[RMDB]
RNA sequence: GGGAACGACUCGAGUAGAGUCGAAAAUAGAAUCUUCGCUUCACUCAUAUUAGCUCGUAAACAUGGCACUUGUUGUACUACAAGGGACAGAUUUUAUCGCUUGGCAAAUGAGUGUGCUCAGGUGCUACGCCCCCCAGCUUCGGCUGGGGGAAAAGAAACAACAACAACAAC
Reactivity to DMS in 0.01 (KOAc 150mM, MgCl2 10mM, bicine 150mM(pH8.5), 24C), signal-to-noise 2, nucleotides 027 to 129: u040a030g020a010a050u030c040u000u000c080g040c040u040u020c030a020c030u000c020a080u040a130u060u040a070g040c050u010c050g050u020a020a040a130c300a090u140g000g010c040a040c040u010u040g030u060u030g020u080a070c030u030a020c040a030a030g000g000g000a030c030a110g010a100u200u000u020u000a090u040c010g000c300u000u030g000g030c080a020a020a050u050g020a030g040u020g030u040g000c040u000c150a020g040g020u030g030c020u020a020c080g000c020
Reactivity to 2A3 in 0.01 (KOAc 150mM, MgCl2 10mM, bicine 150mM(pH8.5), 24C), signal-to-noise 5, nucleotides 027 to 129: u040a010g020a020a020u010c010u030u050c040g000c000u160u190c020a020c010u000c010a000u030a120u160u050a070g000c000u010c040g020u050a010a050a020c060a150u060g020g030c050a000c030u010u000g020u030u030g110u150a120c110u030a000c010a010a010g010g040g050a040c010a010g050a040u030u030u060u050a160u190c080g000c100u040u050g060g000c020a030a030a040u060g010a010g020u020g010u000g000c010u010c020a020g000g000u000g040c000u030a010c030g090c020
Conditions: 150 mM KOAc, 10 mM MgCl2 and 150 mM bicine (pH 8.5), 24 C. This 170-nucleotide RNA was probed chemically with DMS and 2A3. For DMS the reverse transcriptase was MarathonRT. It was measured as part of the RMDB library 15KLIB. For 2A3, 8,176 sequencing reads were counted. For 2A3 the reverse transcriptase was SuperScript II with manganese. Reactivities are given for positions 27 through 129.